Conditions: 150 mM KOAc, 10 mM MgCl2 and 150 mM bicine (pH 8.5), 24 C.
An RNA of 207 nucleotides, treated with 2A3 and DMS and read out base by base.
As a SHAPE reagent, 2A3 marks flexible, mostly unpaired nucleotides at the ribose 2'-OH.
DMS (dimethyl sulfate) methylates the pairing face of unpaired adenines and cytosines.
RNA sequence: GGGAACGACUCGAGUAGAGUCGAAAAGGGGUCGUGCCCGGCGUAAGAGGUUGAGACAUGCUCUGAAGCCUCCACGGAGCAACAGCUCAACUCCCCACCUUACGUCACGACGGAGGCACCCAAAAGCGUAGCGCUUGGUUCGCCAAGCGCUACGCAACAAUAGCAGAAUGUUCGCAUUCUGCUAUUGAAAAGAAACAACAACAACAAC
Reactivity to 2A3 in 0.01 (KOAc 150mM, MgCl2 10mM, bicine 150mM(pH8.5), 24C), signal-to-noise 2, nucleotides 027 to 156: g000g030g000g000u070c040g020u050g010c020c050c030g040g000c010g000u000a010a000g020a010g040g000u020u030g020a010g020a040c200a290u280g010c000u000c000u000g040a100a050g000c000c000u050c000c000a000c040g010g010a000g000c030a040a100c040a160g040c020u000c010a000a030c020u120c050c000c000c010a040c010c020u010u000a010c010g020u020c070a020c090g100a020c040g000g000a070g010g000c010a030c020c050c010a050a200a010a010g000c000g000u000a000g000c010g030c020u020u020g000g030u120u140c230g030c040c040a000a000g010c000g000c010u000a000c020g000c000a000a000
Reactivity to DMS in 0.01 (KOAc 150mM, MgCl2 10mM, bicine 150mM(pH8.5), 24C), signal-to-noise 2, nucleotides 027 to 156: g020g020g080g030u000c070g010u000g000c010c010c030g020g000c000g020u000a000a020g020a150g040g010u000u000g000a030g010a070c050a300u010g020c030u010c020u000g020a020a140g000c060c020u000c050c030a300c060g020g000a030g040c000a080a090c060a160g000c020u010c020a050a040c000u000c220c060c010c040a300c090c030u000u000a040c000g010u000c000a100c170g000a120c010g050g000a060g020g050c010a080c030c020c010a060a040a090a170g020c000g040u000a000g050c000g000c010u000u000g010g000u000u000c300g030c000c010a020a010g020c000g000c000u000a000c010g030c000a000a020